[RMDB]
RNA sequence: GGGAACGACUCGAGUAGAGUCGAAAAUGCUGAUGACAUCUCUAAGGUCCAGGUACAGUAAAUGGCUCCCUUCCAGAAGCAAUACUGUUUUCCAUAUGGUUUAAAGAGGACCAGGUAGCAAGCAGGGCUGAAUCUCGGUAUUCGUACCGAGAUUCAGAAAAGAAACAACAACAACAAC
Reactivity to DMS in 0.01 (KOAc 150mM, MgCl2 10mM, bicine 150mM(pH8.5), 24C), signal-to-noise 1, nucleotides 027 to 126: u000g020c030u010g000a140u020g010a090c040a080u010c040u000c060u000a090a230g020g020u010c040c000a040g010g010u000a010c010a020g020u020a020a100a060u010g000g000c010u000c020c000c050u000u000c240c130a110g000a000a030g000c010a080a090u010a070c020u000g010u000u000u020u000c010c000a050u000a220u020g000g010u010u010u010a050a090a120g000a050g000g020a010c050c040a050g030g000u000a050g030c060a040a070g010c070a090g000g000g030
Reactivity to 2A3 in 0.01 (KOAc 150mM, MgCl2 10mM, bicine 150mM(pH8.5), 24C), signal-to-noise 1, nucleotides 027 to 126: u100g060c040u040g040a160u140g030a050c030a060u030c010u010c000u040a150a000g010g010u010c000c010a010g050g060u050a010c000a020g010u050a000a070a210u150g060g020c000u070c050c000c000u110u010c060c020a020g030a040a020g010c040a040a030u040a130c000u000g020u070u050u080u000c020c000a060u100a130u230g010g090u000u040u140a050a200a000g090a080g010g000a000c010c000a000g030g000u010a030g000c030a090a010g010c010a010g010g020g070
This 177-nucleotide RNA was probed chemically with DMS and 2A3. For DMS, 1,138 sequencing reads were counted. For 2A3, 817 sequencing reads were counted. Source: RMDB library OK2TST, as collected in RNAgym. The RNA was probed in 150 mM KOAc, 10 mM MgCl2 and 150 mM bicine (pH 8.5) at 24 C.